Source: RMDB library OK2TRN, as collected in RNAgym. This 177-nucleotide RNA was probed chemically with 2A3 and DMS. 2A3 adducts were read by reverse transcription with SuperScript II with manganese. The DMS profile rests on 6,784 reads. For DMS the reverse transcriptase was MarathonRT. The reactions ran in a buffer of 150 mM KOAc, 10 mM MgCl2 and 150 mM bicine (pH 8.5), at 24 C.
[RMDB]
RNA sequence: GGGAACGACUCGAGUAGAGUCGAAAACAACGCCUGGGUCUGGCCGGGUGGGCGGGCGAUGGCCCAGUUGGUCAUCUUCCCGGCGCGCGCUGCCGACACGAACGAGCCGGUGGACAUCGUCGGCGCCAGCUUUUCAACAAUUCGUUGUUGAAAAGCUAAAAGAAACAACAACAACAAC
Reactivity to 2A3 in 0.01 (KOAc 150mM, MgCl2 10mM, bicine 150mM(pH8.5), 24C), signal-to-noise 5, nucleotides 027 to 126: c020a020a060c040g030c020c020u110g050g000g040u040c050u090g090g020c030c030g050g000g110u100g030g100g030c040g030g020g030c060g050a060u050g030g000c000c010c000a070g300u150u170g010g000u030c000a050u000c040u100u110c000c010c000g050g000c040g010c020g010c020g010c020u040g000c020c010g020a020c020a010c090g100a180a020c050g000a040g040c030c020g040g040u060g030g060a060c050a160u150c050g040u010c010g020g000c010g020c010c010
Reactivity to DMS in 0.01 (KOAc 150mM, MgCl2 10mM, bicine 150mM(pH8.5), 24C), signal-to-noise 5, nucleotides 027 to 126: c060a140a210c090g000c030c010u010g020g020g020u000c060u010g030g010c030c020g030g010g030u010g010g010g020c030g030g000g030c300g000a050u000g010g000c000c000c090a080g000u010u000g020g000u000c020a050u000c060u000u010c050c010c000g020g000c030g030c050g010c070g020c030u000g020c010c010g000a040c040a110c090g010a080a080c120g010a110g000c020c020g000g010u000g000g010a100c140a080u010c050g010u000c020g010g000c030g010c090c170
Values are in units of 0.01, from 0 to 300, in steps of 10. The 2A3 profile rests on 8,290 reads.